Chemical mapping of a 177-nucleotide RNA with DMS and 2A3. Values cover nucleotides 27 to 126. It was measured as part of the RMDB library M2PK50. For DMS the reverse transcriptase was MarathonRT. 2A3 adducts were read by reverse transcription with SuperScript II with manganese. For DMS, 916 sequencing reads were counted. For 2A3, 2,311 sequencing reads were counted.

RNA sequence: GGGAACGACUCGAGUAGAGUCGAAAAGUGCACGACUUCGGUCGUGCACAAAUAAAGGCAGUCGAGUGCGUACGGCACACUCAUACGCUGACGCCACGACAAAAAGUAACGUCUUCGGACGUUACAAGAUGUUGGUUCAGUUCGCUGAACCAACAUCAAAAGAAACAACAACAACAAC
Reactivity to DMS in 0.01 (KOAc 150mM, MgCl2 10mM, bicine 150mM(pH8.5), 24C), signal-to-noise 2, nucleotides 027 to 126: g050u000g020c010a060c000g000a000c010u000u000c260g000g030u000c000g000u000g000c010a000c000a020a040a060u040a070a020a080g010g010c210a080g030u010c080g000a080g030u000g000c060g030u000a120c060g020g000c040a140c160a050c140u000c230a170u010a150c140g000c000u000g000a040c050g000c000c040a260c050g000a050c020a090a050a030a050a020g000u000a030a060c000g040u000c000u000u000c150g040g000a010c000g010u000u000a010c000a030a070
Reactivity to 2A3 in 0.01 (KOAc 150mM, MgCl2 10mM, bicine 150mM(pH8.5), 24C), signal-to-noise 2, nucleotides 027 to 126: g020u010g020c010a000c010g030a000c010u060u130c300g040g000u000c010g010u000g000c010a010c000a000a000a000u010a000a010a000g120g050c050a020g000u000c040g020a040g060u200g050c000g010u040a250c020g030g000c020a020c010a010c100u150c110a070u170a150c090g000c020u000g000a000c030g000c000c020a010c010g020a010c050a010a120a000a000a000g000u000a000a000c000g000u000c000u000u070c160g110g000a000c000g010u010u000a000c000a000a020